[RMDB]
RNA sequence: GGGAACGACUCGAGUAGAGUCGAAAACAAAAACAACUGGAUAAAGUUCCUAAUUGUCCCAGUGAUAUACAAGUUCAUGUCCACGAUUCACACUCAGAAGCUGCCAGAAUAGAGAGCUUAGGAAUGGGAACGACUUGUCGUUCGCGACAAGUCGUUCAAAAGAAACAACAACAACAAC
Reactivity to 2A3 in 0.01 (KOAc 150mM, MgCl2 10mM, bicine 150mM(pH8.5), 24C), signal-to-noise 3, nucleotides 027 to 126: c030a010a070a070a000a010c020a030a030c040u050g000g000a070u150a160a230a010g050u020u070c040c000u060a120a150u080u060g040u080c020c000c000a010g010u010g090a030u110a010u050a110c050a090a020g040u050u050c050a050u140g080u010c010c010a030c030g010a020u040u060c020a010c000a000c080u030c030a010g030a150a010g030c020u060g050c010c000a030g060a110a010u110a070g090a010g000a000g040c030u050u080a040g050g060a050a170u100g030g090
Reactivity to DMS in 0.01 (KOAc 150mM, MgCl2 10mM, bicine 150mM(pH8.5), 24C), signal-to-noise 1, nucleotides 027 to 126: c140a060a000a160a140a060c070a090a040c040u120g030g070a210u000a020a060a160g000u000u000c010c020u000a190a140u040u020g000u000c060c000c030a000g010u010g030a090u070a020u010a120c280a090a130g010u030u000c010a010u000g020u000c050c000a070c050g000a100u030u000c070a040c060a070c050u040c040a080g000a000a040g010c030u000g030c010c000a130g020a070a030u010a080g000a080g000a100g010c070u000u000a030g100g000a000a040u020g010g000